[RMDB]
RNA sequence: GGGAACGACUCGAGUAGAGUCGAAAAGAUGGAAAACCACAGAGUGGAGAAACGAAUGUCGGUUGAACAUCACACGAUGAACAGGAAACUCAGAACAGCCUUGCGAUUUCAGCCGUGCUAGGGAGGGGCUCCGAGGAAGAGACGGAACUGGCACUGAUCAGUACUCACUCUUCGGAGUGAGUACUGAAAAAGAAACAACAACAACAAC
Reactivity to 2A3 in 0.01 (KOAc 150mM, MgCl2 10mM, bicine 150mM(pH8.5), 24C), signal-to-noise 1, nucleotides 027 to 156: g040a000u030g030g000a000a020a050a050c000c020a020c040a080g070a040g120u100g110g060a140g070a080a160a010c050g080a300a020u130g020u060c050g000g000u020u010g000a060a000c020a010u020c010a010c000a000c100g090a070u080g040a060a010c040a040g050g000a030a050a020c040u040c080a050g080a100a050c010a030g010c020c000u040u090g020c030g060a050u000u000u100c020a000g000c030c010g040u060g020c060u060a040g000g020g040a040g030g000g010g010c000u000c010c080g010a000g040g020a010a070g080a020g000a060c070g030g020a000a060c010u050g000g050c020a020c140u050g050a050